[RMDB]
RNA sequence: GGGAACGACUCGAGUAGAGUCGAAAAGAUUUAUGAAAAAGGUAUUUACUUUAUUCAACAAAGUCCGUUAUUAGGCUAUGGGCCAUUUAACUAUUAUAAACUAAUCGGAAAUAUACCACAUAACAUCCGCUGUUGUGAGAUUCGUCUCACAACAGCGAAAAGAAACAACAACAACAAC
Reactivity to 2A3 in 0.01 (KOAc 150mM, MgCl2 10mM, bicine 150mM(pH8.5), 24C), signal-to-noise 1, nucleotides 027 to 126: g000a040u000u020u000a070u030g040a060a000a000a000a000g080g000u000a000u060u230u040a060c010u080u160u300a090u110u300c240a130a240c040a010a070a000g000u000c000c000g000u000u070a030u070u040a000g060g000c070u010a040u300g020g290g120c000c100a030u050u040u140a030a010c070u070a090u300u000a020u090a070a030a000c060u050a090a090u000c000g000g060a060a000a000u100a000u030a030c040c000a010c000a000u010a000a000c030a170u030c020